[RMDB]
RNA sequence: GGGAACGACUCGAGUAGAGUCGAAAAAUCAGAGGGCGCUAUCAUGCAAACUAGGAUUGUCUGCUCAUGCACUGAACCAACUACCGAUAACUAACAGUGCAUGAAGGUUAGUUAUUCCAUAUUAAUUAAAACUCGUAAUUCUUCGGAAUUACGAGAAGACUCGUAGUUAGUUCGCUAACUACGAGUCAAAAGAAACAACAACAACAAC
Reactivity to 2A3 in 0.01 (KOAc 150mM, MgCl2 10mM, bicine 150mM(pH8.5), 24C), signal-to-noise 4, nucleotides 027 to 156: a000u050c030a010g020a070g080g020g000c010g020c020u090a110u300c070a060u270g020c020a030a000a040c030u030a040g000g070a050u030u080g020u020c000u030g010c020u000c010a000u020g000c010a010c000u010g030a080a060c040c030a090a090c070u170a180c050c070g120a150u070a190a030c020u030a050a040c010a000g010u000g000c010a010u010g000a010a000g020g030u060u070a010g000u020u050a080u070u010c020c000a030u080a100u230u200a120a090u100u130a030a090a050a100c000u000c000g000u000a000a010u000u000c000u000u020c090g070g000a000a000u010u000a000c000g000a000g000a000a010
Reactivity to DMS in 0.01 (KOAc 150mM, MgCl2 10mM, bicine 150mM(pH8.5), 24C), signal-to-noise 2, nucleotides 027 to 156: a060u000c050a080g010a130g000g000g020c080g010c030u000a050u000c040a120u030g010c000a080a130a090c060u000a100g010g010a170u000u000g040u000c030u010g070c020u000c030a030u020g000c010a000c020u000g000a150a110c060c030a050a100c150u010a300c020c040g010a090u010a030a130c070u000a090a160c010a020g020u020g000c010a030u000g020a030a060g040g020u000u000a040g060u010u000a080u000u000c020c020a080u030a170u010u000a050a200u000u000a050a070a050a220c000u000c010g030u000a000a000u010u000c000u040u020c300g010g010a040a000u020u000a000c020g010a020g010a030a030